The record gives the reactivity of an RNA of 207 nucleotides to DMS and 2A3. DMS (dimethyl sulfate) methylates the pairing face of unpaired adenines and cytosines. The 2A3 profile rests on 3,195 reads. The data come from the RNA Mapping Database (RMDB), library M2RFOK. Reactivities are given for positions 27 through 156. The DMS profile rests on 3,579 reads.
RNA sequence: GGGAACGACUCGAGUAGAGUCGAAAAUGGGCUACCAGUAAGCGAAAAAUGAUACAGGACGAAAAAAACAUAAUUCGAGAUUUUUCAGGAUGGAUUUUUUUAGGUAUCUAUCAAAUCUAUUCUGAUGCAACGUAGAGCACGUUCGCGUGCUCUACAACAUUAGGAAAGCGUUCGCGCUUUCCUAAUGAAAAGAAACAACAACAACAAC
Reactivity to DMS in 0.01 (KOAc 150mM, MgCl2 10mM, bicine 150mM(pH8.5), 24C), signal-to-noise 1, nucleotides 027 to 156: u000g050g020g000c020u010a130c040c010a140g040u010a090a060g000c040g000a010a090a060a090a070u000g020a190u010a080c040a060g000g000a000c020g020a000a000a040a090a090a030a120c040a080u010a060a170u000u010c010g000a150g020a210u000u000u010u000u010c020a040g000g010a020u000g010g000a010u000u000u000u000u000u000u000a000g030g000u000a040u000c010u010a020u000c090a010a020a030u000c020u000a020u000u000c000u000g000a020u010g010c100a040a130c080g020u000a000g010a020g040c010a000c000g020u000u010c300g040c010g040u000g010c000u000c000u000a000c000a050a070
Reactivity to 2A3 in 0.01 (KOAc 150mM, MgCl2 10mM, bicine 150mM(pH8.5), 24C), signal-to-noise 3, nucleotides 027 to 156: u050g020g000g000c010u040a030c010c020a050g050u090a050a030g040c030g080a090a030a020a040a030u110g040a030u080a150c070a080g050g040a030c040g030a040a040a010a030a010a050a040c050a060u160a110a070u120u080c050g020a030g020a230u060u220u110u170u080c000a020g010g000a000u010g010g010a000u000u040u000u000u020u060u080a020g000g030u180a070u190c010u000a020u010c010a000a000a000u000c000u000a010u010u010c000u000g010a010u050g010c030a040a070c100g000u010a000g000a000g010c000a000c000g020u040u040c140g000c000g070u000g010c000u000c000u000a000c000a000a000